[RMDB]
This 177-nucleotide RNA was probed chemically with 2A3 and DMS. DMS adducts were read by reverse transcription with MarathonRT. The reactions ran in a buffer of 150 mM KOAc, 10 mM MgCl2 and 150 mM bicine (pH 8.5), at 24 C. The DMS profile rests on 4,422 reads. Source: RMDB library OK2TST, as collected in RNAgym.
RNA sequence: GGGAACGACUCGAGUAGAGUCGAAAAUGCUCGGGCUAUCAACUCCCGCGAAAAGGCGGAUUUAAAAUAUCCACGUAAUACCUAUAUCAUCGGCGAUGUUCAAGGGUGCUAUCGCGAGUUGCAAGAAGACCCUAAAAUGAUUCGUCAUUUUAGGGUCAAAAGAAACAACAACAACAAC
Reactivity to 2A3 in 0.01 (KOAc 150mM, MgCl2 10mM, bicine 150mM(pH8.5), 24C), signal-to-noise 4, nucleotides 027 to 126: u060g000c000u000c020g030g030g020c050u070a050u250c010a020a020c030u030c010c030c040g000c010g030a060a090a010a010g100g010c040g010g020a010u060u100u180a050a110a030a030u130a020u020c010c010a010c000g020u030a020a040u010a130c010c020u070a080u030a010u250c030a020u050c020g120g030c080g080a030u050g050u050u070c070a100a100g060g000g020u020g030c010u040a020u060c010g000c000g010a020g030u030u050g000c030a070a000g110a080a010
Reactivity to DMS in 0.01 (KOAc 150mM, MgCl2 10mM, bicine 150mM(pH8.5), 24C), signal-to-noise 5, nucleotides 027 to 126: u000g000c030u000c020g020g010g020c070u000a070u010c070a070a120c070u000c030c080c020g000c080g000a030a060a090a120g010g020c040g000g010a040u000u000u010a100a090a130a100u000a050u000c010c000a060c060g020u010a050a110u000a070c050c010u010a150u000a050u000c030a020u000c030g010g010c120g010a040u000g010u010u000c160a090a210g010g000g030u000g020c060u000a100u000c030g020c030g000a040g010u010u000g020c140a110a130g000a100a130